Background: Chemical mapping of a 307-nucleotide RNA with DMS and 2A3.
RNA sequence: GGGAACGACUCGAGUAGAGUCGAAAAGAUGACGGUGACGUCAUCACCGUUACUACGGUAACGGACGUUCGCGUACGCGCGAACGAGGACCGCGUGAGCGGUCCAAGUGAUAACGGUGACGUUAUCACAACGCGCUUCUACGGAAGCGCGAGUCAUUCUUCGGAAUGACAGGCGAGAACGUGAGUUCUCGCCAACUAAACAAAAAACAAACAGCUCCAUAGGGCAGGGUGCUAAACUCCACCCGGAGCAGGUACGGCCCGUACUGAACAUGGAUGUUCGCAUCCAUGAAAAGAAACAACAACAACAAC
Reactivity to DMS in 0.01 (KOAc 150mM, MgCl2 10mM, bicine 150mM(pH8.5), 24C), signal-to-noise 2, nucleotides 027 to 266: g000a040u000g000a020c000g000g010u000g000a110c000g020u010c000a000u000c010a170c020c000g000u000u000a000c010u000a080c120g020g000u000a000a010c000g000g000a270c070g010u000u000c000g050c040g010u020a150c300g060c050g000c010g000a030a000c000g000a220g000g030a000c000c000g100c020g010u030g020a260g030c000g040g010u000c000c000a030a030g020u010g000a010u020a010a030c000g010g000u030g000a110c000g000u000u010a000u000c000a000c000a120a130c010g000c000g020c000u020u000c000u010a110c180g020g040a000a010g020c020g020c000g000a010g000u000c010a000u000u000c000u000u030c210g030g010a020a000u000g000a020c020a070g000g030c000g000a010g020a010a010c000g000u040g000a290g010u010u000c000u000c000g030c010c020a000a020c110u030a130a100a090c170a000a000a070a050a080a040c120a110a150a130c180a050g000c000u000c000c010a200u020a250g010g000g020c040a030g000g000g000u020g000c100u020a040a080a110c050u020c170c000a260c020c070c030g020g000a040g040c010a070g000g000u000a010c050g000g000c060c050c010g000u010a040c020u000g000a130a240
Reactivity to 2A3 in 0.01 (KOAc 150mM, MgCl2 10mM, bicine 150mM(pH8.5), 24C), signal-to-noise 5, nucleotides 027 to 266: g010a000u010g000a000c010g000g080u110g040a040c010g000u000c000a000u000c000a010c000c010g000u000u000a000c010u010a030c200g130g000u000a000a000c000g000g030a020c020g000u010u010c010g000c010g010u060a120c290g020c000g000c010g110a010a000c000g000a110g000g000a000c000c010g000c030g070u140g090a110g020c000g000g000u000c000c000a000a020g000u000g000a010u000a000a000c010g010g050u070g050a020c000g000u010u000a000u000c000a000c000a010a010c010g000c000g000c000u000u020c010u010a110c200g100g000a000a000g000c000g000c000g010a020g000u000c000a010u010u000c000u030u070c230g080g010a000a010u010g000a000c010a020g000g000c000g000a000g000a010a010c030g090u120g130a150g030u030u000c000u000c000g000c010c000a000a010c010u110a010a060a030c090a060a070a040a040a010a000c100a100a150a030c080a080g020c030u040c030c030a180u230a200g000g010g000c040a030g020g000g010u050g040c040u230a120a110a130c060u040c040c010a010c000c010c010g000g010a000g010c000a010g030g040u040a030c040g070g040c020c020c010g010u080a090c050u090g060a080a020
For 2A3 the reverse transcriptase was SuperScript II with manganese. For DMS, 4,830 sequencing reads were counted. High DMS reactivity at an A or C suggests that its Watson-Crick edge is free. The reactions ran in a buffer of 150 mM KOAc, 10 mM MgCl2 and 150 mM bicine (pH 8.5), at 24 C. It was measured as part of the RMDB library POS240.